[RMDB]
RNA sequence: GGGAACGACUCGAGUAGAGUCGAAAAGAUAUGGAAUCGCAUGGACGCAUCGAUCUAUGGAGAUAGCUGUUAUGUUCGGAAACGAACAUAACCGAAACCAUAGGGAGCGUUGAGCGAUUCCUAAGUCCGGAAAGCUUAAGUUCGCUUAAGCUUUCCGAAAAGAAACAACAACAACAAC
Reactivity to DMS in 0.01 (KOAc 150mM, MgCl2 10mM, bicine 150mM(pH8.5), 24C), signal-to-noise 1, nucleotides 027 to 126: g000a040u010a000u010g020g000a030a000u000c000g020c000a030u020g010g040a020c000g020c010a300u000c270g020a000u010c020u000a000u010g010g020a190g010a280u030a060g010c140u010g040u000u000a010u010g020u000u000c000g020g010a020a010a010c030g010a000a010c000a000u000a010a000c010c070g000a090a160a210c010c000a010u000a010g000g000g000a000g050c000g030u000u000g010a040g040c000g000a010u000u010c000c030u010a000a080g000u010c010

Description:
The record gives the reactivity of an RNA of 177 nucleotides to DMS. Conditions: 150 mM KOAc, 10 mM MgCl2 and 150 mM bicine (pH 8.5), 24 C. For DMS the reverse transcriptase was MarathonRT. The data come from the RNA Mapping Database (RMDB), library TTRINS.